Conditions: 150 mM KOAc, 10 mM MgCl2 and 150 mM bicine (pH 8.5), 24 C. An RNA of 177 nucleotides, treated with DMS and 2A3 and read out base by base.
[RMDB]
RNA sequence: GGGAACGACUCGAGUAGAGUCGAAAACACCGGUGUUAUGGCGUGAACCGCGUUCACGUCGGCUUCCAAUUUCUGGCGGGCUACAGGCCUCGGCCCUCUUGUAGUGACCUGCGCCUACUUUCGCGCGAACUAUAAUCGCAUUCGUGCGAUUAUAGUUAAAAGAAACAACAACAACAAC
Reactivity to DMS in 0.01 (KOAc 150mM, MgCl2 10mM, bicine 150mM(pH8.5), 24C), signal-to-noise 9, nucleotides 027 to 126: c150a150c050c020g000g010u010g010u010u020a070u020g010g010c010g010u000g000a020a040c030c230g010c260g010u000u000c010a020c010g020u000c000g000g010c080u000u010c040c040a080a140u010u010u010c070u000g020g010c080g010g010g010c030u000a050c110a100g000g000c080c020u000c100g000g000c020c020c040u000c020u000u000g010u000a050g020u010g000a120c050c020u010g000c080g000c010c070u010a100c190u000u000u010c090g010c020g010c060g000
Reactivity to 2A3 in 0.01 (KOAc 150mM, MgCl2 10mM, bicine 150mM(pH8.5), 24C), signal-to-noise 9, nucleotides 027 to 126: c070a040c000c020g010g020u080g010u080u170a180u240g020g000c010g000u010g010a030a020c040c150g090c170g070u020u010c000a000c000g000u010c010g000g000c010u110u040c020c020a120a180u060u120u090c050u060g040g010c020g020g010g000c000u050a030c030a080g010g060c010c010u020c050g040g000c000c010c000u050c020u020u080g060u060a060g020u020g120a100c000c020u030g000c010g010c010c010u080a120c020u080u090u110c030g000c000g000c010g040